[RMDB]
RNA sequence: GGGAACGACUCGAGUAGAGUCGAAAAUCAGAAUCAGGCCGGAGUGUUUAGCGCUCCGUAAUCACGGUCGUACAUCCAGCCGGUAGCCUGGUUCCUUGCAUUGAGUGAUGUACGGAGUUUAUAGAGCAAAAGAAAGACCUGUUCGCAGGUCUUUCAACCUCUGUAGAGUCUUCGGACUCUACAGAGGAAAAGAAACAACAACAACAAC
Reactivity to 2A3 in 0.01 (KOAc 150mM, MgCl2 10mM, bicine 150mM(pH8.5), 24C), signal-to-noise 1, nucleotides 027 to 156: u130c000a030g040a000a020u010c000a010g000g030c000c030g010g010a020g000u060g070u150u240u250a130g120c020g000c010u000c000c010g020u040a010a010u090c080a010c150g000g010u050c010g010u010a010c010a020u000c010c030a000g000c030c010g040g000u010a010g010c000c000u000g010g000u000u000c000c030u050u110g080c030a080u040u130g050a030g150u120g010a030u010g000u060a000c040g060g000a100g000u070u130u030a160u130a030g110a010g000c030a040a020a130a000g000a000a000a000g000a010c000c000u020g030u010u070c230g000c110a000g010g000u000c010u000u000u000c000a000a000

An RNA of 207 nucleotides, treated with 2A3 and read out base by base. The RNA was probed in 150 mM KOAc, 10 mM MgCl2 and 150 mM bicine (pH 8.5) at 24 C. The 2A3 profile rests on 575 reads. Reactivities are given for positions 27 through 156.